Record summary: An RNA of 207 nucleotides, treated with 2A3 and read out base by base. The data come from the RNA Mapping Database (RMDB), library PDB130. The 2A3 profile rests on 463 reads. 2A3 adducts were read by reverse transcription with SuperScript II with manganese. The reactions ran in a buffer of 150 mM KOAc, 10 mM MgCl2 and 150 mM bicine (pH 8.5), at 24 C.
[RMDB]
RNA sequence: GGGAACGACUCGAGUAGAGUCGAAAAUCUUUGCAGACAAUUAUGAAUGCCAUAGGUUAGAUUUUUAAUUUAGUCUAUAAAUGAAAGUGUAAGCAUUUCACCUCAAGAGUAAGGCGGCAACGCAGGAACUGAAAUCACUAGACCGUUUCUGACACCAGACUUACUUCAUCUUCGGAUGAAGUAAGUCAAAAGAAACAACAACAACAAC
Reactivity to 2A3 in 0.01 (KOAc 150mM, MgCl2 10mM, bicine 150mM(pH8.5), 24C), signal-to-noise 1, nucleotides 027 to 156: u000c000u000u000u100g000c000a030g060a130c020a150a120u130u100a030u300g020a030a010u030g000c020c000a030u040a030g010g000u010u010a030g010a090u100u070u040u060u300a030a050u000u010u070a000g000u020c020u030a090u030a080a000a110u090g000a070a040a020g080u070g000u040a020a110g020c010a080u040u020u030c040a040c000c030u000c050a040a000g030a030g060u030a070a000g110g000c050g010g030c010a070a000c070g010c070a000g080g000a000a070c090u090g070a030a030a030u050c000a010c050u020a070g010a000c000c040g020u000u000u000c010u060g080a030c010a000c080c000a020